An RNA of 177 nucleotides, treated with 2A3 and DMS and read out base by base.
The RNA was probed in 150 mM KOAc, 10 mM MgCl2 and 150 mM bicine (pH 8.5) at 24 C.
[RMDB]
RNA sequence: GGGAACGACUCGAGUAGAGUCGAAAAAGCUACACACAACGAGUAAAAAUCCUGCUCAAGAUCGUCCUUCCAAUGGCUGUAUAUUUAAAGAUUUUGGGAGCUCCGCUGAAUCGUUAAUGUGUAGUGAGUUCCGUUGGAAUUUCGAUUCCAACGGAACAAAAGAAACAACAACAACAAC
Reactivity to 2A3 in 0.01 (KOAc 150mM, MgCl2 10mM, bicine 150mM(pH8.5), 24C), signal-to-noise 6, nucleotides 027 to 126: a020g020c000u010a000c000a000c010a000c000a000a020c010g020a010g050u160a010a100a050a010a030u090c030c020u050g080c010u020c030a030a030g030a100u040c020g080u080c040c000u100u060c040c040a110a110u080g070g000c050u080g130u110a080u020a070u110u200u180a120a180a070g060a100u060u040u050u010g030g000g000a020g020c020u010c020c020g000c030u030g030a050a050u000c000g000u010u030a060a060u130g010u000g010u000a000g000u000g000a010
Reactivity to DMS in 0.01 (KOAc 150mM, MgCl2 10mM, bicine 150mM(pH8.5), 24C), signal-to-noise 2, nucleotides 027 to 126: a180g010c000u020a000c020a000c040a090c160a030a000c000g000a030g060u050a040a050a060a160a100u030c080c000u000g000c000u000c020a040a030g020a000u030c000g010u000c050c060u010u010c000c040a040a040u000g030g010c000u000g000u000a060u000a070u020u030u120a120a130a030g040a120u000u000u030u000g000g010g000a080g020c070u040c020c060g000c060u000g000a050a010u010c020g030u000u020a120a150u000g050u000g030u000a020g030u000g000a090